[RMDB]
RNA sequence: GGGAACGACUCGAGUAGAGUCGAAAACAGACUCGAGCGAAAGCUCGGCGAAAGCCGCGUACAUGUGAAGGUCGGCGGGUGUACAGUCGACAGUUACUCUUCGGAGUAACAAUAGAAACAACAACAAAUUUAGCAUGGAUUUCGAUCCAUGCUAAAUAAAAGAAACAACAACAACAAC
Reactivity to DMS in 0.01 (KOAc 150mM, MgCl2 10mM, bicine 150mM(pH8.5), 24C), signal-to-noise 6, nucleotides 027 to 126: c090a130g000a090c070u010c020g020a050g040c000g010a170a130a180g020c020u010c000g000g020c050g020a110a120a120g000c050c020g000c070g000u020a020c080a080u000g000u010g010a080a070g010g000u010c010g000g000c020g010g020g020u010g000u020a050c050a090g010u000c000g000a130c210a110g000u000u000a000c000u000c000u000u070c160g020g010a050g000u010a000a000c010a090a070u060a100g000a120a080a050c100a060a060c210a060a070c140a060a070
Reactivity to 2A3 in 0.01 (KOAc 150mM, MgCl2 10mM, bicine 150mM(pH8.5), 24C), signal-to-noise 6, nucleotides 027 to 126: c050a010g060a060c010u010c050g010a000g020c020g060a110a010a020g010c000u000c000g000g000c000g060a130a060a020g050c010c010g030c010g020u060a050c040a100u130g080u100g220a160a030g100g020u020c020g010g020c010g000g030g040u130g040u050a060c050a040g030u010c000g030a010c020a020g010u000u000a010c000u000c000u010u080c190g100g000a010g000u000a000a010c000a000a000u110a030g080a040a120a000c060a030a020c010a020a000c030a050a170
An RNA of 177 nucleotides, treated with DMS and 2A3 and read out base by base.
For DMS, 10,454 sequencing reads were counted.
Source: RMDB library OK1LIB, as collected in RNAgym.
The RNA was probed in 150 mM KOAc, 10 mM MgCl2 and 150 mM bicine (pH 8.5) at 24 C.
Values cover nucleotides 27 to 126.